[RMDB]
Structure probing data (2A3 and DMS) for a 177-nucleotide construct. Values cover nucleotides 27 to 126.
RNA sequence: GGGAACGACUCGAGUAGAGUCGAAAAGAAGACCGCUGGCGAAGGCCGGUCCAUGCGAAACACGCGACGAACAGCAACGAAAGUGGGCGUAGCAAACGGCAUUAGAUACGCAAGCGGUCCACGCCGAAAAUUUUAAGUAAUUCGUUACUUAAAAUUUAAAAGAAACAACAACAACAAC
Reactivity to 2A3 in 0.01 (KOAc 150mM, MgCl2 10mM, bicine 150mM(pH8.5), 24C), signal-to-noise 9, nucleotides 027 to 126: g060a060a010g010a000c000c000g000c000u010g030g000c020g050a120a040g130g000c010c000g000g020u060c100c020a060u050g000c010g060a070a040a020c060a010c020g080c010g070a080c020g050a180a090c060a120g130c050a060a070c040g070a150a080a030g010u020g020g040g000c040g010u020a010g020c020a090a090a020c000g000g000c000a010u090u140a070g070a130u170a120c000g000c020a020a000g000c000g000g000u000c000c000a010c030g070c010c010g060a070
Reactivity to DMS in 0.01 (KOAc 150mM, MgCl2 10mM, bicine 150mM(pH8.5), 24C), signal-to-noise 9, nucleotides 027 to 126: g000a150a160g000a010c000c000g010c010u010g000g010c000g000a140a110g000g020c010c000g000g000u040c300c170a100u000g000c000g000a130a120a080c050a040c020g010c020g020a190c060g000a140a110c210a160g020c250a080a080c050g010a040a110a150g010u000g000g000g000c010g000u010a150g000c040a030a090a100c000g000g010c000a070u030u040a120g000a170u040a140c010g010c010a040a010g020c000g000g010u000c000c020a050c100g000c020c010g020a050

The RNA was probed in 150 mM KOAc, 10 mM MgCl2 and 150 mM bicine (pH 8.5) at 24 C. Source: RMDB library OK1LIB, as collected in RNAgym.